An RNA of 177 nucleotides, treated with DMS and 2A3 and read out base by base. In probing experiments dimethyl sulfate is read out at A N1 and C N3, which are open when not base-paired. The 2A3 profile rests on 735 reads. The data come from the RNA Mapping Database (RMDB), libraries RFM100 and RFMREP.

RNA sequence: GGGAACGACUCGAGUAGAGUCGAAAACUGUACACACCGCCCGUCGCUACUACGGAUUGAAUUAUUUAGUGAGGUCUCUGACGCCUUGCGUGUUACGGUUGUUUCGCAAAAGUUGACCGAACUUGAUGGGUAUCACUAAAUUCGUUUAGUGAUACCCAAAAGAAACAACAACAACAAC
Reactivity to DMS in 0.01 (KOAc 150mM, MgCl2 10mM, bicine 150mM(pH8.5), 24C), signal-to-noise 1, nucleotides 027 to 126: c030u020g010u000a010c140a100c110a100c050c030g040c010c080c030g020u000c040g040c040u000a030c060u030a040c050g040g000a100u030u000g010a130a080u010u010a080u050u010u000a030g050u000g000a080g020g000u000c060u030c060u010g030a060c090g000c060c020u010u000g040c030g010u000g000u010u000a090c180g010g010u000u000g030u000u000u000c020g000c080a060a070a030a030g000u000u000g010a120c080c070g000a100a030c020u000u000g000a160u000
Reactivity to 2A3 in 0.01 (KOAc 150mM, MgCl2 10mM, bicine 150mM(pH8.5), 24C), signal-to-noise 2, nucleotides 027 to 126: c000u000g040u040a040c010a010c000a020c000c050g060c060c010c000g010u030c000g000c040u060a030c040u020a030c080g070g010a050u110u120g020a090a080u120u130a040u040u300u050a030g000u070g120a050g000g050u000c010u010c030u070g120a100c100g110c020c040u040u040g090c020g060u080g050u070u120a030c070g060g000u000u010g000u000u040u000c020g030c070a080a050a050a100g030u060u040g200a150c000c130g000a010a000c000u010u000g010a030u050